The record gives the reactivity of an RNA of 177 nucleotides to DMS and 2A3.
RNA sequence: GGGAACGACUCGAGUAGAGUCGAAAACUGAUUGAUGAUUUCGCUGUUCUGCUGGAUCAGCAUAUUGGUGUUAAACAGCUGAGAACCGUUGAUGGCGUCAGUGCUGCCUUCGCCAAUGUUACCAUCAACUUACUUCUAGGUUCGCCUAGAAGUAAGUAAAAGAAACAACAACAACAAC
Reactivity to DMS in 0.01 (KOAc 150mM, MgCl2 10mM, bicine 150mM(pH8.5), 24C), signal-to-noise 9, nucleotides 027 to 126: c030u000g000a130u010u010g010a030u000g010a080u000u000u010c110g020c010u000g000u000u000c040u000g030c200u010g010g010a030u000c020a020g020c010a080u010a030u000u000g010g010u000g010u010u010a060a080a140c040a040g010c010u000g000a180g000a130a140c040c020g000u000u010g010a130u010g010g010c100g010u000c040a040g010u000g000c040u000g000c090c090u000u000c030g010c010c010a010a020u000g010u000u000a070c050c010a030u000c040a070
Reactivity to 2A3 in 0.01 (KOAc 150mM, MgCl2 10mM, bicine 150mM(pH8.5), 24C), signal-to-noise 9, nucleotides 027 to 126: c030u050g040a140u120u050g020a020u020g020a040u040u130u170c080g010c010u020g040u040u020c030u060g250c090u180g050g000a030u030c010a000g000c020a010u030a040u110u050g030g010u020g010u050u050a070a150a030c010a010g000c020u030g040a030g030a150a030c020c020g050u100u180g160a210u230g050g010c050g040u020c020a020g050u030g120c060u020g000c010c030u030u050c010g000c010c010a020a020u060g030u070u050a060c040c010a020u030c010a010

Reactivities are given for positions 27 through 126.
For DMS, 24,824 sequencing reads were counted.
Source: RMDB library OK2TST, as collected in RNAgym.